[RMDB]
RNA sequence: GGGAACGACUCGAGUAGAGUCGAAAAGUUAGGUGAGGCUCCUAUGCAAACACAGGCCACUGCCCAAAAAUGUCCAUAGACGCCAAUGGGUAGAACAGGGAUUGUCGGAUUAAGGCUUUCCAUAAUGAAAACAAAGUAUGCUUCGGCAUACUUUGAAGUUUUAGAUAUGGUUCGCCAUAUCUAAAACAAAAGAAACAACAACAACAAC
Reactivity to DMS in 0.01 (KOAc 150mM, MgCl2 10mM, bicine 150mM(pH8.5), 24C), signal-to-noise 2, nucleotides 027 to 156: g010u000u000a060g000g020u000g000a090g010g030c030u000c030c010u000a060u000g020c040a150a080a080c050a050c030a090g000g030c000c000a110c010u000g000c000c000c000a000a040a080a140a130u010g000u000c030c090a140u000a130g000a080c030g050c040c060a100a180u000g000g020g010u000a030g000a090a150c080a110g020g040g000a070u010u000g000u010c000g010g010a220u000u000a100a130g010g000c050u000u010u000c010c020a110u000a040a090u010g010a130a110a060a170c010a030a010a000g020u000a010u000g000c000u000u000c300g010g010c010a000u010a010c000u000u020u010g010a020a070
Reactivity to 2A3 in 0.01 (KOAc 150mM, MgCl2 10mM, bicine 150mM(pH8.5), 24C), signal-to-noise 4, nucleotides 027 to 156: g040u040u030a020g000g050u030g050a080g030g030c030u030c050c030u080a070u150g060c050a080a120a040c030a020c030a080g080g000c010c020a020c030u030g000c000c000c000a030a030a000a000a010u020g010u000c010c030a160u100a240g020a010c010g010c020c010a020a050u020g010g010g000u020a010g010a030a050c060a080g050g000g040a040u030u030g040u050c020g040g040a070u120u150a130a060g010g010c000u020u030u010c040c010a050u160a180a100u160g120a050a060a010a020c000a000a000a000g000u000a000u000g000c000u020u070c110g110g000c000a000u010a010c000u000u000u010g000a010a000
This 207-nucleotide RNA was probed chemically with DMS and 2A3. DMS adducts were read by reverse transcription with MarathonRT. The RNA was probed in 150 mM KOAc, 10 mM MgCl2 and 150 mM bicine (pH 8.5) at 24 C.